Structure probing data (2A3) for a 177-nucleotide construct. It was measured as part of the RMDB library OK1LIB. 2A3 adducts were read by reverse transcription with SuperScript II with manganese. The 2A3 profile rests on 577 reads.
RNA sequence: GGGAACGACUCGAGUAGAGUCGAAAACAAGUCACGUCUGAAAAGCGAAAGCCCUAAGAUAUGCAGCUGUGAAGACUUGACGCAGCGGUGCUCGCAGAACUUCGGUUCUGCAAAAGAAACAACAACAGACUAUCCUCAUCUUCGGAUGAGGAUAGUCAAAAGAAACAACAACAACAAC
Reactivity to 2A3 in 0.01 (KOAc 150mM, MgCl2 10mM, bicine 150mM(pH8.5), 24C), signal-to-noise 1, nucleotides 027 to 126: c000a000a000g050u030c000a000c000g030u110c050u130g120a150a130a000a000g000c000g020a000a090a000g000c000c000c000u030a090a030g030a140u100a100u280g000c000a010g020c000u000g030u050g080a190a070g000a000c030u010u000g110a050c000g030c000a000g000c000g160g140u020g000c080u050c030g000c000a000g020a000a000c000u050u090c250g120g000u000u000c000u000g060c000a010a000a010a000g050a000a040a000c030a010a010c000a000a010c000a060